Source information: Chemical mapping of a 177-nucleotide RNA with 2A3 and DMS. The RNA was probed in 150 mM KOAc, 10 mM MgCl2 and 150 mM bicine (pH 8.5) at 24 C. It was measured as part of the RMDB library OK2TRN.

[RMDB]
RNA sequence: GGGAACGACUCGAGUAGAGUCGAAAACAAGCAGAUUUGGCGACUGUCCUGAGCUUGAUGAAGUGCUACAUAUCUUUAGGUGAAAGAGGCCCUUUCAUGGUCAUUCUGGAGGACUCAAUUCAGACUAGAAAUAGGUUCCAUUCGUGGAACCUAUUUCAAAAGAAACAACAACAACAAC
Reactivity to 2A3 in 0.01 (KOAc 150mM, MgCl2 10mM, bicine 150mM(pH8.5), 24C), signal-to-noise 3, nucleotides 027 to 126: c040a010a040g060c040a040g070a250u080u160u140g070g040c030g060a070c100u100g030u050c000c030u020g030a020g010c010u080u060g030a060u030g060a120a000g030u030g040c010u050a070c010a130u180a080u040c010u000u080u070a070g010g020u080g050a030a010a030g020a060g030g040c000c000c040u010u080u070c100a150u140g040g000u040c020a050u130u040c030u020g040g020a020g030g020a010c020u000c050a000a060u060u040c020a000g080a120c010u070a060
Reactivity to DMS in 0.01 (KOAc 150mM, MgCl2 10mM, bicine 150mM(pH8.5), 24C), signal-to-noise 4, nucleotides 027 to 126: c090a090a120g020c060a070g000a130u000u000u000g010g000c040g020a120c100u000g010u020c030c030u000g010a110g020c040u010u010g010a110u000g020a070a060g020u000g020c040u000a090c080a060u000a070u010c020u010u000u000a060g020g020u000g000a020a030a090g010a120g010g010c090c020c050u000u020u010c020a070u000g010g010u000c210a060u000u000c030u000g000g000a040g010g010a110c040u000c050a070a160u000u000c040a050g000a090c160u000a090